[RMDB]
The data come from the RNA Mapping Database (RMDB), library OK1LIB.
Structure probing data (2A3 and DMS) for a 177-nucleotide construct.
DMS adducts were read by reverse transcription with MarathonRT.
The 2A3 profile rests on 2,288 reads.
The DMS profile rests on 3,012 reads.
RNA sequence: GGGAACGACUCGAGUAGAGUCGAAAAUUGGACAGCACACUGGUCGGCGACGAUCCGGCGUUAGCCGCGGCAUUGGCGGCCAGCGACGCGGCCGAGUUACCCCGCAUCGCGGUGUCGGCACAGCAGGGAGUCAGAACGAAUUCGUUCGUUCUGACUCAAAAGAAACAACAACAACAAC
Reactivity to 2A3 in 0.01 (KOAc 150mM, MgCl2 10mM, bicine 150mM(pH8.5), 24C), signal-to-noise 3, nucleotides 027 to 126: u120u050g100g010a030c040a010g000c050a040c010a020c090u010g000g010u010c010g030g160c040g000a040c030g040a160u040c000c000g000g000c030g040u120u230a040g000c030c000g050c100g010g000c010a040u000u120g170g010c000g000g000c000c000a030g010c010g010a010c060g010c010g020g000c000c000g040a020g040u240u100a050c030c030c010c000g000c040a200u100c150g010c010g070g000u010g110u030c000g020g050c000a020c010a180g060c030a000g000g110
Reactivity to DMS in 0.01 (KOAc 150mM, MgCl2 10mM, bicine 150mM(pH8.5), 24C), signal-to-noise 2, nucleotides 027 to 126: u050u010g000g010a170c130a110g000c050a180c080a170c020u000g000g000u000c010g000g010c040g020a020c070g030a080u000c070c020g000g010c010g010u010u050a030g010c010c020g020c160g050g010c110a200u010u020g000g030c000g000g000c000c030a020g010c000g000a090c160g030c020g000g000c010c000g000a060g030u010u020a110c160c050c000c010g000c050a110u020c050g010c040g000g000u000g000u010c040g000g030c110a010c070a120g020c070a160g030g010